RNA sequence: GGGAACGACUCGAGUAGAGUCGAAAACGGGCCGUCCAUUGGGUUCACACCCCCAGGCCGCGGGCCGGCUACUCUUCUUUCUCUUUCGUCGUCAUCCCUGGCCAGCCUCCGGAGUUCCUCUUCUUCCAUAACUCGGUGUUCGCACCGAGUAAAAGAAACAACAACAACAAC
Reactivity to 2A3 in 0.01 (KOAc 150mM, MgCl2 10mM, bicine 150mM(pH8.5), 24C), signal-to-noise 7, nucleotides 027 to 129: c020g010g010g010c000c010g030u070c020c010a140u090u120g030g000g030u110u150c060a040c030a020c090c010c000c010c010a020g020g020c050c020g040c030g030g020g030c040c020g020g000c020u040a060c020u010c000u120u020c010u030u150u020c040u010c000u050u070u060c030g020u010c000g010u020c010a120u080c040c000c010u000g020g000c030c010a030g020c020c010u050c000c030g050g010a050g030u040u030c000c000u010c020u070u000c020u050u000c020c020a090u060a110
Reactivity to DMS in 0.01 (KOAc 150mM, MgCl2 10mM, bicine 150mM(pH8.5), 24C), signal-to-noise 7, nucleotides 027 to 129: c110g040g030g000c040c000g020u020c020c040a180u010u010g020g010g060u030u040c200a100c160a260c070c050c010c050c060a090g010g000c170c040g050c170g020g020g040c010c020g000g000c030u020a080c070u020c080u000u000c040u010u050u010c030u010c030u000u000u000c090g020u020c080g050u060c030a150u000c040c000c050u020g020g000c000c000a120g030c050c030u000c060c050g030g020a060g060u000u000c020c010u000c050u050u020c050u050u010c020c030a050u010a030